[RMDB]
RNA sequence: GGGAACGACUCGAGUAGAGUCGAAAAGUGAGGAAUGAAGUCAAGAGCCAGGGUCUGGUUGACAACAGAGAGAACUGUUGGAAGUUCUUUAUAGAUCGGAUCCGGCGACAGCUGAAGGUAAAGAGCAUUUACUGACAGGGGCAGGCAGAGACCCGAAGAUGAUCGAUUAUUUCGAUAAUCGAUCAUCAAAAGAAACAACAACAACAAC
Reactivity to DMS in 0.01 (KOAc 150mM, MgCl2 10mM, bicine 150mM(pH8.5), 24C), signal-to-noise 2, nucleotides 027 to 156: g050u000g000a060g000g000a110a100u000g000a090a140g000u000c060a070a120g000a270g040c010c020a060g040g000g050u010c000u010g020g040u000u000g010a160c090a120a230c110a170g010a120g000a040g010a060a080c020u000g020u000u010g020g010a100a080g010u000u000c020u010u020u000a110u000a220g000a040u010c000g020g030a060u000c030c010g010g010c030g020a080c060a090g050c020u000g020a080a110g030g010u000a030a040a150g000a100g030c080a080u020u010u000a070c050u000g000a140c060a080g020g000g040g030c060a050g000g000c010a100g000a150g010a090c040c000c000g010a090a200
Reactivity to 2A3 in 0.01 (KOAc 150mM, MgCl2 10mM, bicine 150mM(pH8.5), 24C), signal-to-noise 4, nucleotides 027 to 156: g060u050g010a020g000g050a090a070u100g020a070a030g030u080c060a080a040g030a030g070c040c110a230g040g000g000u000c000u010g010g020u040u050g050a030c050a140a020c040a070g130a000g010a030g030a130a040c010u070g060u170u120g080g030a080a010g010u020u000c000u020u070u050a220u070a050g020a020u020c010g010g000a010u000c010c010g020g000c020g020a010c000a010g040c010u060g030a060a030g070g000u040a040a050a030g040a020g010c040a030u050u070u160a090c100u070g040a020c020a030g000g010g000g000c020a020g010g020c020a020g020a010g030a080c010c040c010g020a050a040